[RMDB]
RNA sequence: GGGAACGACUCGAGUAGAGUCGAAAAACAACAGAUAGCUGGAACCAGCGUAGAAUUCUACGCAUAUCCAUAGCGAAUGGUACCUGUAAAGAAAAUAACAGUGGAUGUACAAGUACCAACAGCCGUUGAUGCCAUGGUGAUGUCAAUCACAUAUGCACUAUAUAUCGUGGUUCGCCACGAUAUAUAGAAAAGAAACAACAACAACAAC
Reactivity to DMS in 0.01 (KOAc 150mM, MgCl2 10mM, bicine 150mM(pH8.5), 24C), signal-to-noise 3, nucleotides 027 to 156: a110c020a070a100c050a070g030a090u000a070g010c030u000g010g020a100a090c110c080a190g000c020g030u010a010g010a300a170u000u010c000u010a020c010g000c000a090u000a060u000c050c020a070u000a040g000c030g030a120a190u010g000g020u010a010c020c020u000g020u000a040a100a140g000a160a070a070a100u000a090a130c100a140g000u000g040g010a150u000g020u000a020c020a020a070g020u000a020c000c010a040a080c090a090g020c010c030g050u030u030g010a090u000g020c060c030a100u000g010g010u000g010a060u000g010u000c160a090a110u020c040a050c020a040u020a060u000g010c070a220
Reactivity to 2A3 in 0.01 (KOAc 150mM, MgCl2 10mM, bicine 150mM(pH8.5), 24C), signal-to-noise 8, nucleotides 027 to 156: a000c030a000a010c020a020g090a120u150a060g030c040u020g040g010a110a130c080c060a030g000c000g000u010a000g050a170a290u300u120c000u010a010c000g000c010a010u050a030u050c010c010a040u120a040g010c010g030a080a050u040g010g010u020a010c010c010u010g010u040a030a100a040g120a050a140a040a040u220a090a010c050a050g110u100g130g090a080u090g000u060a010c010a020a010g000u000a010c000c000a020a040c070a050g040c020c020g010u000u040g030a050u070g030c050c010a020u080g010g060u000g010a020u020g130u170c070a100a030u040c000a020c010a040u090a020u110g010c030a000
Overview: Source: RMDB library OK3TST, as collected in RNAgym. An RNA of 207 nucleotides, treated with DMS and 2A3 and read out base by base. 2A3 adducts were read by reverse transcription with SuperScript II with manganese. For 2A3, 6,463 sequencing reads were counted.